An RNA of 177 nucleotides, treated with 2A3 and DMS and read out base by base. For DMS the reverse transcriptase was MarathonRT. Values cover nucleotides 27 to 126. For DMS, 2,373 sequencing reads were counted. Conditions: 150 mM KOAc, 10 mM MgCl2 and 150 mM bicine (pH 8.5), 24 C. It was measured as part of the RMDB library VIROID. For 2A3 the reverse transcriptase was SuperScript II with manganese. For 2A3, 1,805 sequencing reads were counted.
[RMDB]
RNA sequence: GGGAACGACUCGAGUAGAGUCGAAAAAAUCGUCUUCACAUAGCAGCUCCAGGACCCCCUUCCGAGAAGACUGAGGGGGGAGCUUGGAGAGUGGGGGACCCAGUGGAACCAUGGGAUGCCCUUCCCGCAAUGGAUGUUAGUUCGCUAACAUCCAUUGAAAAGAAACAACAACAACAAC
Reactivity to 2A3 in 0.01 (KOAc 150mM, MgCl2 10mM, bicine 150mM(pH8.5), 24C), signal-to-noise 2, nucleotides 027 to 126: a000a000u130c080g050u010c050u080u080c020a060c040a120u190a070g100c010a000g020c020u000c000c000a020g020g010a020c000c010c010c010c030u010u000c000c010g090a100g070a240a010g110a130c010u060g000a020g000g000g020g030g000g040a110g090c030u020u000g010g000a010g030a010g030u090g040g010g000g020g040a020c040c000c000a020g050u090g080g060a080a040c010c040a100u020g010g000g020a030u070g040c040c000c000u010u020c020c000c000g000
Reactivity to DMS in 0.01 (KOAc 150mM, MgCl2 10mM, bicine 150mM(pH8.5), 24C), signal-to-noise 3, nucleotides 027 to 126: a090a040u000c080g020u000c020u000u010c030a060c060a140u000a110g020c180a140g010c020u000c010c020a020g000g000a190c010c000c000c010c020u000u010c010c090g010a220g000a120a080g010a110c090u000g000a020g010g010g000g020g010g000a020g010c020u010u000g000g000a010g020a040g010u010g020g010g010g000g000a130c030c010c020a040g010u010g000g000a090a100c080c060a110u010g010g000g020a130u000g010c020c020c020u000u000c000c000c030g020